[RMDB]
The record gives the reactivity of an RNA of 177 nucleotides to 2A3 and DMS. In probing experiments dimethyl sulfate is read out at A N1 and C N3, which are open when not base-paired. For 2A3, 12,037 sequencing reads were counted.
RNA sequence: GGGAACGACUCGAGUAGAGUCGAAAACAGCCUGAAGUAGUCCAAGGGAGGACUGGCGCUCUCCACAAGAGAGGUGGCCUUUGCAGGAGUGCUGCAGCUAAAGAGCUAUUAUCAGCUCUGCCUUGGGGCAGGAAGAAGAAUUCGUUCUUCUUCCUGCAAAAGAAACAACAACAACAAC
Reactivity to 2A3 in 0.01 (KOAc 150mM, MgCl2 10mM, bicine 150mM(pH8.5), 24C), signal-to-noise 7, nucleotides 027 to 126: c040a010g100c010c010u090g100a150a050g110u180a010g060u020c010c020a030a050g030g020g030a070g020g050a080c010u010g020g000c090g050c020u000c000u000c010c020a100c030a090a030g030a000g000a020g040g110u070g060g020c000c000u080u110u070g010c030a030g000g130a120g120u130g070c010u010g000c000a010g020c030u120a150a090a050g050a020g010c030u030a050u230u100a110u290c040a000g000c000u010c010u030g070c010c000u030u050g000g010g060
Reactivity to DMS in 0.01 (KOAc 150mM, MgCl2 10mM, bicine 150mM(pH8.5), 24C), signal-to-noise 8, nucleotides 027 to 126: c170a130g010c050c020u010g010a100a090g020u010a080g010u000c010c010a040a080g000g010g010a060g000g000a050c030u000g010g010c180g000c010u000c000u000c010c060a120c300a140a300g000a020g000a030g010g010u000g010g010c020c010u000u000u000g010c040a090g000g000a140g020u010g010c020u000g010c020a040g010c120u010a060a050a020g000a050g010c000u000a080u010u010a090u010c120a020g000c000u000c000u000g000c020c020u000u000g000g010g010